[RMDB]
The record gives the reactivity of an RNA of 177 nucleotides to DMS and 2A3. It was measured as part of the RMDB library OK1LIB. For 2A3 the reverse transcriptase was SuperScript II with manganese. For DMS, 12,898 sequencing reads were counted. The reactions ran in a buffer of 150 mM KOAc, 10 mM MgCl2 and 150 mM bicine (pH 8.5), at 24 C.
RNA sequence: GGGAACGACUCGAGUAGAGUCGAAAAACUUGAGGAACUUGCCAUGGAACUUCUUGUAGCGCUCGUCGUCAGGGUGAAUGGCGACGGCCGUAUCGCCCAGCAGCGUCUCAGGACGCGUCGUCGCAAAGCUAAAUUAUUAUUUCGAUAAUAAUUUAGCAAAAGAAACAACAACAACAAC
Reactivity to DMS in 0.01 (KOAc 150mM, MgCl2 10mM, bicine 150mM(pH8.5), 24C), signal-to-noise 5, nucleotides 027 to 126: a070c040u000u010g020a060g010g010a020a170c040u010u010g020c120c140a080u030g000g000a040a210c010u000u010c030u020u020g010u020a080g010c080g020c020u010c020g020u000c020g020u000c020a020g000g010g030u020g000a100a070u000g010g000c000g010a020c030g000g010c150c020g000u000a050u020c100g000c010c000c000a130g000c120a150g000c030g000u000c010u000c150a130g020g010a040c020g010c020g010u000c050g010u010c070g010c090a080a060a110
Reactivity to 2A3 in 0.01 (KOAc 150mM, MgCl2 10mM, bicine 150mM(pH8.5), 24C), signal-to-noise 9, nucleotides 027 to 126: a000c040u050u070g010a020g030g020a030a030c010u040u120g130c070c030a110u210g010g020a030a050c000u020u010c000u030u060g050u100a050g010c020g000c080u080c050g040u010c000g020u010c020a040g080g140g090u230g200a170a140u040g010g000c000g000a010c000g010g000c010c000g010u050a080u090c060g040c010c000c000a020g040c030a010g010c010g050u000c020u010c060a100g110g040a020c010g000c010g050u060c030g040u020c030g000c090a090a080a020